[RMDB]
RNA sequence: GGGAACGACUCGAGUAGAGUCGAAAACCAUCGACUGUCACCAGAUGCUGCAUCACCUGAUCACUGAUGGCUCAACGGUAUCCGGCGGUACAACUGAAUACUUGUAGCUGCCUUUUGAGCGGGUUGUAAAAUCGGAGGUUGUUCGCAACCUCCGAAACCGAUAGGAAUACUUCGGUAUUCCUAUCGGAAAAGAAACAACAACAACAAC
Reactivity to 2A3 in 0.01 (KOAc 150mM, MgCl2 10mM, bicine 150mM(pH8.5), 24C), signal-to-noise 3, nucleotides 027 to 156: c010c000a030u090c050g100a050c050u040g010u100c020a040c110c010a040g010a100u050g010c040u030g030c010a050u030c010a050c020c020u050g040a080u040c040a020c050u030g010a020u080g090g000c030u030c060a020a090c030g070g000u050a090u050c060c030g000g020c000g000g020u050a020c020a050a010c050u170g040a190a040u140a190c070u040u070g040u050a040g120c020u030g000c000c000u070u060u050u120g020a020g010c040g030g030g000u040u040g030u040a040a070a060a120u020c000g000g000a000g000g000u000u000g010u040u010c070g020c110a000a000c000c000u000c000c000g000a000a000a000
Reactivity to DMS in 0.01 (KOAc 150mM, MgCl2 10mM, bicine 150mM(pH8.5), 24C), signal-to-noise 1, nucleotides 027 to 156: c010c010a190u000c010g030a110c040u000g010u000c010a110c040c030a110g020a120u010g010c030u010g050c070a210u000c090a040c050c000u020g010a150u000c100a060c100u000g010a060u000g000g020c000u000c010a070a020c040g040g000u000a000u000c000c010g000g040c040g110g020u030a060c150a040a070c000u010g000a080a080u000a070c030u000u000g000u000a060g050c020u000g010c000c000u000u010u010u010g030a090g000c040g000g060g030u000u020g030u000a050a070a090a110u010c000g020g010a020g030g030u010u010g040u000u000c300g060c060a070a030c000c020u010c010c000g020a010a000a060
The record gives the reactivity of an RNA of 207 nucleotides to 2A3 and DMS.
The RNA was probed in 150 mM KOAc, 10 mM MgCl2 and 150 mM bicine (pH 8.5) at 24 C.
It was measured as part of the RMDB library M2RFPK.
2A3 is a SHAPE reagent: it acylates the 2'-hydroxyl of flexible nucleotides of all four kinds.
For 2A3, 2,385 sequencing reads were counted.